[RMDB]
Source: RMDB libraries RFM100 and RFMREP, as collected in RNAgym. Chemical mapping of a 177-nucleotide RNA with 2A3 and DMS. Reactivities are given for positions 27 through 126. Reactivities are rounded to 0.1 and cut off at 0 and 3. The reactions ran in a buffer of 150 mM KOAc, 10 mM MgCl2 and 150 mM bicine (pH 8.5), at 24 C.
RNA sequence: GGGAACGACUCGAGUAGAGUCGAAAAUAAUUGGAAAAAUGCAGUGCAUUGCACUUGAUUGCACAACUCCUCGUCAGCGUUAGGGAACGGACUGCAUUGCUCGGGGCGAACAUCGUUCUCCUCGCGGAGUGUACCCAAAUUUCGAUUUGGGUACACUAAAAGAAACAACAACAACAAC
Reactivity to 2A3 in 0.01 (KOAc 150mM, MgCl2 10mM, bicine 150mM(pH8.5), 24C), signal-to-noise 8, nucleotides 027 to 126: u110a000a090u150u110g050g040a070a090a030a010a020u060g000c010a010g010u020g040c040a090u080u100g030c010a020c060u070u170g110a140u090u140g010c020a020c010a070a130c040u030c020c000u030c020g120u060c070a060g030c040g060u080u120a060g030g010g030a030a020c040g020g050a000c010u010g000c000a030u010u070g020c010u010c020g010g000g010g000c030g020a020a020c040a170u110c100g020u000u000c020u030c000c010u040c020g040c040g020g050
Reactivity to DMS in 0.01 (KOAc 150mM, MgCl2 10mM, bicine 150mM(pH8.5), 24C), signal-to-noise 6, nucleotides 027 to 126: u030a080a110u020u020g020g000a010a060a080a050a030u010g000c000a040g010u000g010c020a100u020u010g030c080a060c070u020u010g010a080u010u000g020c020a060c230a130a100c110u010c030c030u010c080g020u020c090a100g010c040g010u010u010a070g000g010g000a070a070c130g010g000a030c040u000g010c040a020u010u000g020c050u010c020g000g010g000g010c080g000a020a040c060a120u010c170g000u000u000c010u000c010c040u000c040g000c130g000g000